[RMDB]
RNA sequence: GGGAACGACUCGAGUAGAGUCGAAAAAGUGGCUAAAGAAGAAAAAAUGGCAUCAUAUGACCUCUUCUUCAGUCUCAGGCUUGUACCAGAUGCCCUGGUAUUCCCAUGAAGGAACUACCCUAGGGAACAAAGCACACAAUUUCGAUUGUGUGCUUUGAAAAGAAACAACAACAACAAC
Reactivity to DMS in 0.01 (KOAc 150mM, MgCl2 10mM, bicine 150mM(pH8.5), 24C), signal-to-noise 3, nucleotides 027 to 126: a070g010u000g000g000c000u000a020a030a020g000a020a030g010a000a060a060a100a120a090u010g000g010c060a060u000c140a120u010a300u010g000a140c120c070u000c000u000u000c010u000u000c050a020g010u000c010u010c180a080g020g010c100u000u000g020u000a100c000c020a090g000a080u010g000c100c030c010u010g010g000u000a110u000u000c010c000c030a080u000g010a180a150g000g010a030a030c120u010a060c040c020c200u000a070g010g010g020a090a220
Reactivity to 2A3 in 0.01 (KOAc 150mM, MgCl2 10mM, bicine 150mM(pH8.5), 24C), signal-to-noise 2, nucleotides 027 to 126: a000g040u030g000g000c020u020a070a000a020g040a000a000g040a030a130a050a070a040a190u170g040g000c050a050u050c030a050u160a160u300g160a300c010c000u000c000u000u000c000u020u000c030a020g020u010c020u020c070a030g000g170c040u070u090g020u090a040c000c010a020g040a220u190g070c000c020c000u000g000g000u020a060u000u010c000c000c000a010u130g070a030a070g000g000a100a000c040u090a040c030c070c050u090a060g000g000g000a040a030

Annotation: An RNA of 177 nucleotides, treated with DMS and 2A3 and read out base by base. The RNA was probed in 150 mM KOAc, 10 mM MgCl2 and 150 mM bicine (pH 8.5) at 24 C. Reactivities are given for positions 27 through 126. The 2A3 profile rests on 1,421 reads. For DMS, 2,085 sequencing reads were counted.